[RMDB]
RNA sequence: GGGAACGACUCGAGUAGAGUCGAAAACUAACGCUACUUCACAAUUCUUACGCCAUCACCUCACUUCCUCUUAUCACGUAGGCACCGUGUCAUUCCACGUCUUCACAAGAAGAGUGAACGAUACAGUAAGAUAUUUUAAGAGAGAGAACACAGUCACCGGAUAAAUCCUUUUCGAAGGAUUUAUCCGAAAAGAAACAACAACAACAAC
Reactivity to DMS in 0.01 (KOAc 150mM, MgCl2 10mM, bicine 150mM(pH8.5), 24C), signal-to-noise 1, nucleotides 027 to 156: c080u000a050a060c050g010c050u000a090c020u000u000c100a080c080a160a130u010u000c040u030u000a050c070g000c070c040a070u000c000a080c010c040u020c020a060c100u000u010c020c010u000c020u000u000a070u020c160a080c060g070u000a030g020g010c140a100c100c030g000u000g010u000c010a140u000u000c050c020a060c040g000u000c020u010u000c000a130c240a050a230g030a040a000g010a200g000u010g010a060a050c000g000a040u010a010c040a000g020u010a050a110g020a120u000a030u000u000u010u000a010a090g000a100g020a060g030a070g020a140a070c010a110c040a070g000u010c020a070c110
Reactivity to 2A3 in 0.01 (KOAc 150mM, MgCl2 10mM, bicine 150mM(pH8.5), 24C), signal-to-noise 5, nucleotides 027 to 156: c040u070a100a030c050g030c050u070a050c030u130u100c080a050c050a140a250u150u020c030u050u110a030c030g030c050c030a030u020c020a040c030c040u030c010a040c030u100u080c030c020u030c020u060u060a110u150c030a020c130g040u050a070g050g030c080a020c020c080g010u000g030u060c040a090u110u010c070c020a020c030g170u010c020u020u030c030a080c040a160a130g010a030a010g010a020g010u010g010a020a010c010g000a000u020a040c020a020g020u030a060a030g030a040u060a050u110u100u060u070a090a020g040a000g000a000g000a010g020a170a010c050a010c010a080g070u100c030a050c120
An RNA of 207 nucleotides, treated with DMS and 2A3 and read out base by base. The DMS profile rests on 2,000 reads. Values cover nucleotides 27 to 156.